[RMDB]
RNA sequence: GGGAACGACUCGAGUAGAGUCGAAAAGACGCCUUUAGAAGAAGAGGCUAGGGGGUAUUCCGGUGUGGGAUACUUAGUAAUAUGCAACGCUAAUUGCAUAAGAUUGAAGGACGGAAUUUACAGUCUUUAGAGAUAAGCACGUUCGCGUGCUUAUCAAGCGCUGAAUUAUGUUCGCAUAAUUCAGCGCAAAAGAAACAACAACAACAAC
Reactivity to 2A3 in 0.01 (KOAc 150mM, MgCl2 10mM, bicine 150mM(pH8.5), 24C), signal-to-noise 2, nucleotides 027 to 156: g080a000c030g000c000c000u080u040u080a180g050a300a020g010a050a020g000a020g020g000c000u020a040g050g000g000g000g000u020a030u060u040c050c020g070g040u180g030u200g040g100g010a010u000a070c050u010u030a030g000u050a020a050u010a020u110g020c000a020a010c020g080c230u150a140a060u120u030g000c000a020u000a000a070g070a050u060u160g040a010a060g010g030a000c030g020g010a040a020u000u160u150a120c030a050g010u030c010u050u070u080a120g040a010g000a060u000a000a000g000c010a020c010g060u140u120c160g000c000g030u000g030c000u000u000a000u030c000a010a010